[RMDB]
RNA sequence: GGGAACGACUCGAGUAGAGUCGAAAAGCAGUCAGGCCCCCGUCUGGGUGGCGCCCACGAGCAUCACAGCCUCCUCAAGUCCGCUUGGAGUGUUGAGGCGCCUGACGACAACGAGUGCUGUGAAUUGGGUCGAAAAUGACUUCGGUCAUUUUCGACCAAAAGAAACAACAACAACAAC
Reactivity to 2A3 in 0.01 (KOAc 150mM, MgCl2 10mM, bicine 150mM(pH8.5), 24C), signal-to-noise 2, nucleotides 027 to 126: g000c040a010g010u000c000a000g000g010c020c000c040c050c030g180u030c050u160g010g020g010u030g070g000c000g150c000c020c000a020c030g020a050g040c000a050u030c010a000c020a040g010c000c000u060c010c020u050c020a060a000g060u070c030c050g040c140u080u230g020g000a060g030u220g080u110u100g030a050g050g030c010g010c020c000u000g020a000c000g040a020c030a020a000c060g050a000g070u280g000c000u000g010u000g000a020a260u170u200g080
Source: RMDB library OK1LIB, as collected in RNAgym. Chemical mapping of a 177-nucleotide RNA with 2A3. The reactions ran in a buffer of 150 mM KOAc, 10 mM MgCl2 and 150 mM bicine (pH 8.5), at 24 C.